[RMDB]
RNA sequence: GGGAACGACUCGAGUAGAGUCGAAAACGUGCGUACUGGGCCGCCGGCACAAUGUUCAACCCAGCCGUCUCAGAGGACGCGGUUCGACCACGAUCAGCCAGCGGGUCAGCGGGGUCCUCCUAGCUAGCAUAGGAUGCUAUUUCGAUAGCAUCCUAUGAAAAGAAACAACAACAACAAC
Reactivity to DMS in 0.01 (KOAc 150mM, MgCl2 10mM, bicine 150mM(pH8.5), 24C), signal-to-noise 7, nucleotides 027 to 126: c090g010u000g020c070g020u000a080c050u000g020g010g020c030c060g020c030c040g020g020c040a090c110a090a070u010g010u000u000c070a070a110c070c010c040a120g010c120c050g000u000c030u000c110a150g020a080g000g010a020c030g010c060g010g000u000u000c150g010a030c020c010a060c060g010a100u010c110a140g000c030c040a070g010c010g000g000g000u000c010a040g020c050g010g000g000g000u000c020c020u000c010c060u000a080g010c100u000a110g000
Reactivity to 2A3 in 0.01 (KOAc 150mM, MgCl2 10mM, bicine 150mM(pH8.5), 24C), signal-to-noise 5, nucleotides 027 to 126: c030g030u090g040c040g060u080a110c030u050g010g070g010c030c010g030c010c000g030g020c020a020c010a060a100u130g010u090u070c010a010a060c000c000c020a020g050c070c030g050u020c040u030c100a120g030a080g090g020a010c010g020c060g120g000u020u050c090g000a030c010c020a130c110g040a100u120c020a030g070c040c000a020g010c030g030g030g170u020c020a000g010c030g020g000g040g000u030c000c000u010c010c010u040a080g050c030u040a020g040